An RNA of 177 nucleotides, treated with 2A3 and DMS and read out base by base. 2A3 adducts were read by reverse transcription with SuperScript II with manganese. Reactivities are given for positions 27 through 126. DMS adducts were read by reverse transcription with MarathonRT. For 2A3, 760 sequencing reads were counted.

RNA sequence: GGGAACGACUCGAGUAGAGUCGAAAAACGCGUAUCGGUUUGCACUCCAGAUGUAGCAAUUGAAAACGAAGAUAUUCCUGGAAAGUUUGCAACCGCGUGGGUGCUAGGCAGUGCACAGCGAUAUGCUGUAGUAGAGGUUCUUCGGAACCUCUACUACAAAAGAAACAACAACAACAAC
Reactivity to 2A3 in 0.01 (KOAc 150mM, MgCl2 10mM, bicine 150mM(pH8.5), 24C), signal-to-noise 1, nucleotides 027 to 126: a020c030g000c000g010u010a010u050c020g160g160u000u000u050g000c010a010c020u000c030c000a010g020a140u090g080u140a010g040c040a110a100u060u140g040a040a070a030a020c030g040a010a020g080a120u120a090u120u100c000c010u010g060g060a150a050a080g050u100u210u070g000c080a080a070c000c060g000c030g050u060g030g080g000u010g000c030u010a100g000g000c060a000g010u000g000c000a000c000a000g110c000g000a010u000a000u100g050c000u040
Reactivity to DMS in 0.01 (KOAc 150mM, MgCl2 10mM, bicine 150mM(pH8.5), 24C), signal-to-noise 1, nucleotides 027 to 126: a100c180g000c010g020u000a020u010c000g000g000u000u000u000g020c000a010c010u000c010c010a220g020a160u010g010u020a070g020c010a060a130u010u000g000a110a020a020a040c120g000a120a100g000a110u030a080u000u000c070c010u010g000g000a080a100a170g000u000u000u000g010c000a040a090c050c060g020c080g030u010g030g000g030u000g020c030u020a030g000g010c170a050g010u010g040c020a000c050a020g000c000g010a040u000a010u000g000c000u020